[RMDB]
RNA sequence: GGGAACGACUCGAGUAGAGUCGAAAACUCAAUUCUCUAAGCGAUGAGAAGCGUGUGGAAAAUUAGGGAAGGGCUACGGCUAUAAUCCUAAGAAAGCUUAUCUACAAGCGGAGGUAUUCUCAGAACGAAAACCAUUUGGCGUUCGCGCCAAAUGGAACGUAGAGGGAUUCUUCGGAAUCCCUCUACGAAAAGAAACAACAACAACAAC
Reactivity to 2A3 in 0.01 (KOAc 150mM, MgCl2 10mM, bicine 150mM(pH8.5), 24C), signal-to-noise 1, nucleotides 027 to 156: c040u000c040a070a140u090u010c020u000c020u080a090a060g130c050g070a060u060g020a050g020a050a020g030c040g000u140g010u040g030g000a090a030a110a180u050u030a060g000g040g010a050a090g030g010g000c000u010a000c220g060g000c000u020a020u020a150a020u040c010c010u030a000a000g040a050a060a000g020c000u040u040a030u120c050u130a020c030a080a020g000c030g000g000a000g020g020u050a120u060u050c030u020c020a030g070a110a060c080g050a100a060a000a020c000c000a000u000u000u000g000g000c010g030u050u050c200g000c010g000c020c020a000a000a000u000g000g010a000a000
Source: RMDB library M2RFPK, as collected in RNAgym. Chemical mapping of a 207-nucleotide RNA with 2A3. For 2A3 the reverse transcriptase was SuperScript II with manganese.